[RMDB]
RNA sequence: GGGAACGACUCGAGUAGAGUCGAAAAAAGGUGGUGGAAGCUGGGGCCGCAGCGCACAUCGCUGCGUGCUUUGAGGAGUUCUUUGCCUCCGGCUAUGUCACUCUGGCUGGAGUGGGCCUCAGCAUGAUCCGGUAGUAUACUUCGGUAUACUACCGGAAAAAGAAACAACAACAACAAC
Reactivity to 2A3 in 0.01 (KOAc 150mM, MgCl2 10mM, bicine 150mM(pH8.5), 24C), signal-to-noise 2, nucleotides 027 to 126: a030a030g030g010u030g000g040u060g020g040a100a050g000c000u000g000g000g000g000c010c010g020c010a010g000c000g110c020a050c020a190u190c060g060c040u000g000c020g030u050g030c000u060u000u050g020a030g030g020a100g030u090u070c010u060u080u050g020c010c000u000c010c000g000g000c010u040a070u180g080u050c040a030c100u090c030u030g100g010c020u030g000g000a020g000u040g000g030g010c010c000u000c000a000g020c020a020u040g040a070
Reactivity to DMS in 0.01 (KOAc 150mM, MgCl2 10mM, bicine 150mM(pH8.5), 24C), signal-to-noise 4, nucleotides 027 to 126: a070a060g020g010u010g010g020u000g010g010a140a080g010c010u000g000g000g010g010c030c000g010c030a020g000c000g050c220a100c280a120u010c050g000c040u000g000c000g010u000g000c010u010u010u010g000a100g010g000a130g000u000u000c060u010u000u000g010c060c000u010c000c130g000g000c010u000a040u010g010u010c160a080c120u010c030u000g020g000c050u000g000g020a020g020u000g010g000g000c030c000u000c020a020g010c030a080u000g000a130